The data come from the RNA Mapping Database (RMDB), library M2RFPK. Chemical mapping of a 207-nucleotide RNA with 2A3 and DMS. Values cover nucleotides 27 to 156. For 2A3 the reverse transcriptase was SuperScript II with manganese. The RNA was probed in 150 mM KOAc, 10 mM MgCl2 and 150 mM bicine (pH 8.5) at 24 C.

[RMDB]
RNA sequence: GGGAACGACUCGAGUAGAGUCGAAAAAAUGCCGCCUCAGUUCCAAGCUCUUUCGUGGCACUGUAAACAGUCCUAUUGAGCUAGGGGCAGUCAACCACGUUGCGAAGCUAAAUUAUCUGGUCGAGAGUUACGAUUCCCUACUUCGGUAGGGAAUCAAACCAGUACGACUAUUCGUAGUCGUACUGGUAAAAGAAACAACAACAACAAC
Reactivity to 2A3 in 0.01 (KOAc 150mM, MgCl2 10mM, bicine 150mM(pH8.5), 24C), signal-to-noise 1, nucleotides 027 to 156: a000a020u080g030c020c000g010c030c000u050c030a050g030u050u090c020c020a050a000g010c020u000c000u050u050u090c110g090u140g020g000c130a020c050u060g060u200a090a140a140c020a030g020u020c000c000u020a050u030u080g010a020g020c010u020a060g000g000g010g000c010a000g030u020c020a010a050c010c020a030c030g020u040u030g060c050g040a040a030g000c040u130a080a100a070u160u120a080u060c080u060g010g060u060c050g050a010g010a010g250u040u140a060c070g010a000u000u040c000c010c000u000a000c000u010u020c160g080g000u000a000g000g010g000a000a000u000c000a000a010
Reactivity to DMS in 0.01 (KOAc 150mM, MgCl2 10mM, bicine 150mM(pH8.5), 24C), signal-to-noise 2, nucleotides 027 to 156: a100a030u000g000c010c060g040c020c010u000c020a130g010u000u000c020c040a230a160g000c000u000c020u060u000u000c080g030u000g010g030c090a000c030u010g020u010a090a080a110c040a140g100u000c020c000u000a110u000u020g020a100g020c130u000a120g050g000g010g040c010a030g000u000c040a040a110c050c010a040c110g000u000u000g000c010g000a130a170g010c070u010a050a020a020u010u000a040u000c060u000g000g030u000c070g000a080g000a190g000u000u000a080c070g000a020u000u000c000c000c000u000a020c000u000u000c230g040g010u000a020g030g020g000a000a000u000c000a030a080